[RMDB]
RNA sequence: GGGAACGACUCGAGUAGAGUCGAAAAGAUCGAGAUCCCGUGCAGUGCAAACGAAUUGAGUGGCGUUCUCGAUCAACGGCGCGGUAGCCCCGGGCACCGUGCGGCGCACGAUCGCGGCCGCCCGGUCCUACCUGCCGGGGUUCGCCCCGGCAGGUAGAAAAGAAACAACAACAACAAC
Reactivity to 2A3 in 0.01 (KOAc 150mM, MgCl2 10mM, bicine 150mM(pH8.5), 24C), signal-to-noise 1, nucleotides 027 to 126: g000a030u000c020g000a000g000a040u020c000c000c030g060u110g080c030a070g060u040g100c050a160a120a000c200g100a170a120u140u150g000a010g070u200g010g050c120g030u030u050c000u020c010g000a000u000c010a000a030c030g020g000c000g000c000g050g060u170a080g040c030c050c060c000g030g020g020c000a000c000c000g050u030g000c000g100g020c040g020c010a000c040g180a070u120c180g040c080g100g000c000c000g000c000c090c020g000g010u040c010